Structure probing data (DMS and 2A3) for a 177-nucleotide construct.
2A3 adducts were read by reverse transcription with SuperScript II with manganese.
[RMDB]
RNA sequence: GGGAACGACUCGAGUAGAGUCGAAAAGAUAUGGACAUGUUUCUGAAUACACGUUGAAAUCGGAAACGAUGGAGUGUAUCCAGAAUACAUGUCCUAAGUCAAACGGGUUACCUUCGGGUAACCCGAAGUUAGCUACAUGCUUCGGCAUGUAGCUAACAAAAGAAACAACAACAACAAC
Reactivity to DMS in 0.01 (KOAc 150mM, MgCl2 10mM, bicine 150mM(pH8.5), 24C), signal-to-noise 1, nucleotides 027 to 126: g010a020u010a300u000g010g010a000c000a010u000g010u000u000u000c000u010g010a040a000u000a000c000a000c000g020u020u010g020a120a130a010u010c000g000g000a090a130a240c010g000a000u010g000g000a150g020u000g000u000a000u000c030c000a000g000a020a000u060a000c000a000u000g010u000c000c000u000a000a090g000u020c020a160a080a150c050g030g020g000u010u000a020c000c000u000u000c250g020g010g000u000a000a010c000c000c000g000a000a020
Reactivity to 2A3 in 0.01 (KOAc 150mM, MgCl2 10mM, bicine 150mM(pH8.5), 24C), signal-to-noise 1, nucleotides 027 to 126: g030a050u070a010u110g000g010a010c010a010u010g010u010u020u000c000u010g010a020a000u020a000c020a000c000g220u300u130g050a050a030a000u000c000g020g060a040a040a070c000g040a020u020g000g020a050g000u020g000u010a010u060c020c010a010g000a020a020u150a000c000a010u000g000u010c000c010u000a010a010g010u020c030a000a080a110c000g000g000g000u000u000a000c000c000u050u140c300g080g000g010u000a000a000c000c010c000g000a000a010
For DMS the reverse transcriptase was MarathonRT.
Values cover nucleotides 27 to 126.
The RNA was probed in 150 mM KOAc, 10 mM MgCl2 and 150 mM bicine (pH 8.5) at 24 C.
The data come from the RNA Mapping Database (RMDB), library TTRDEL.